Source: RMDB library OK1LIB, as collected in RNAgym. Structure probing data (2A3 and DMS) for a 177-nucleotide construct. The RNA was probed in 150 mM KOAc, 10 mM MgCl2 and 150 mM bicine (pH 8.5) at 24 C. DMS (dimethyl sulfate) methylates the pairing face of unpaired adenines and cytosines.

[RMDB]
RNA sequence: GGGAACGACUCGAGUAGAGUCGAAAACUAUGUACAGACAGUACAGUGGAUAAGGUCUCUCGAUAUCCAACUUUAACAAUGGUACUUGCAGUGGUAUCUAUCAAGAUAGGCAGGCUAUCAUAGAAAGAAGAUAUGUAUUAUUCGUAGUACGUAUCUUAAAAGAAACAACAACAACAAC
Reactivity to 2A3 in 0.01 (KOAc 150mM, MgCl2 10mM, bicine 150mM(pH8.5), 24C), signal-to-noise 4, nucleotides 027 to 126: c010u030a060u120g000u000a000c010a110g200a040c050a020g070u010a000c000a010g030u020g030g000a010u010a030a040g040g040u010c010u000c000u000c000g020a010u010a010u060c010c020a030a040c060u060u020u040a110a030c090a040a060u030g010g000u000a000c000u010u020g000c010a060g070u100g170g030u060a000u000c000u010a150u090c040a110a000g000a020u010a000g060g000c010a000g020g000c040u020a000u010c000a020u020a040g120a020a250a010g220
Reactivity to DMS in 0.01 (KOAc 150mM, MgCl2 10mM, bicine 150mM(pH8.5), 24C), signal-to-noise 3, nucleotides 027 to 126: c030u010a050u020g000u000a010c020a090g010a140c230a140g030u000a010c000a030g020u000g010g000a040u010a030a130g000g010u010c040u000c000u000c000g000a110u020a030u000c020c020a080a210c080u000u050u010a070a090c160a110a040u010g000g000u000a010c000u000u020g010c020a120g000u020g040g030u010a000u000c000u000a120u050c200a040a050g010a020u000a040g000g010c000a010g010g010c230u000a010u010c000a020u000a080g020a060a300a300g000